[RMDB]
RNA sequence: GGGAACGACUCGAGUAGAGUCGAAAAUGCUGUGUCAACGUCAUUAUUGAUUGACGAUGUACUGAUUGAAUGGGAAAAUCCAUCCGGAUGGCUUAUAGGAUUCGAUUUUGAUGUAUACUCUGUUUUAACUAGUAGAGGCGGUAUCACCGAGGCGACCAGGCAUAAAUCAGUUCGCUGAUUUAUGCCUAAAAGAAACAACAACAACAAC
Reactivity to 2A3 in 0.01 (KOAc 150mM, MgCl2 10mM, bicine 150mM(pH8.5), 24C), signal-to-noise 3, nucleotides 027 to 156: u060g000c010u020g010u060g070u120c020a090a040c040g020u010c020a050u050u200a150u130u220g280a180u060u070g000a010c020g010a020u060g020u090a090c050u030g060a090u090u090g030a070a060u120g000g000g030a050a050a110a100u010c010c020a030u020c010c010g030g040a040u010g030g000c060u160u060a060u090a140g030g030a030u050u120c070g010a030u020u060u040u240g050a030u050g060u100a050u010a030c020u000c030u030g120u020u080u050u120a080a050c090u040a040g050u030a020g040a000g080g010c020g000g000u010a020u020c010a030c010c030g000a030g000g010c000g000a050c000c030
Reactivity to DMS in 0.01 (KOAc 150mM, MgCl2 10mM, bicine 150mM(pH8.5), 24C), signal-to-noise 2, nucleotides 027 to 156: u020g000c050u010g040u000g000u000c030a180a100c030g040u000c000a020u010u010a130u030u010g030a010u000u010g020a180c030g010a160u010g020u020a080c040u020g000a180u000u010g020a060a040u000g000g030g050a040a080a080a160u020c000c030a040u000c010c040g030g050a090u000g010g010c090u000u000a090u000a090g010g030a140u000u000c030g030a070u000u000u000u020g030a070u000g020u000a060u010a080c010u000c020u000g030u000u000u000u000a040a170c060u000a100g030u010a050g000a110g010g040c060g010g010u000a080u000c040a000c040c010g010a100g040g010c080g000a110c070c090
The record gives the reactivity of an RNA of 207 nucleotides to 2A3 and DMS. Values are in units of 0.01, from 0 to 300, in steps of 10. Source: RMDB library OK3TST, as collected in RNAgym. DMS adducts were read by reverse transcription with MarathonRT. 2A3 adducts were read by reverse transcription with SuperScript II with manganese.